[RMDB]
RNA sequence: GGGAACGACUCGAGUAGAGUCGAAAAGAUAUGGAAUCAUCUCCAUUCGUCUUGGACCUCGGAAACGAGCUAGACGGAUGGAGAGUGAUUCCUAAGUCAAAGGGUUUUGUCUUCGGACAAAACCCAACUUAUAAGACACCUUCGGGUGUCUUAUAAGAAAAGAAACAACAACAACAAC
Reactivity to DMS in 0.01 (KOAc 150mM, MgCl2 10mM, bicine 150mM(pH8.5), 24C), signal-to-noise 3, nucleotides 027 to 126: g010a050u010a300u020g000g010a000a000u000c000a060u000c010u000c000c010a010u000u000c000g000u000c000u000u010g020g010a110c300c000u010c000g010g000a150a120a120c010g010a000g020c030u000a010g000a010c000g010g000a000u000g000g010a000g000a010g010u000g010a010u000u000c000c000u000a010a080g010u010c050a100a120a100g000g010g010u000u000u000u000g020u000c000u010u020c220g040g000a020c000a000a000a000a000c000c000c000a010a010
Reactivity to 2A3 in 0.01 (KOAc 150mM, MgCl2 10mM, bicine 150mM(pH8.5), 24C), signal-to-noise 2, nucleotides 027 to 126: g040a010u120a010u180g000g000a000a010u000c010a000u020c010u020c010c000a000u010u020c000g040u000c010u040u160g130g100a300c050c000u000c000g030g030a080a080a050c010g010a000g010c000u000a000g000a010c000g010g000a000u000g020g000a000g010a010g000u000g010a000u010u000c000c000u000a070a020g060u010c060a050a050a150g000g000g000u010u010u030u020g000u000c010u050u170c300g130g000a000c020a000a000a000a000c000c000c000a000a000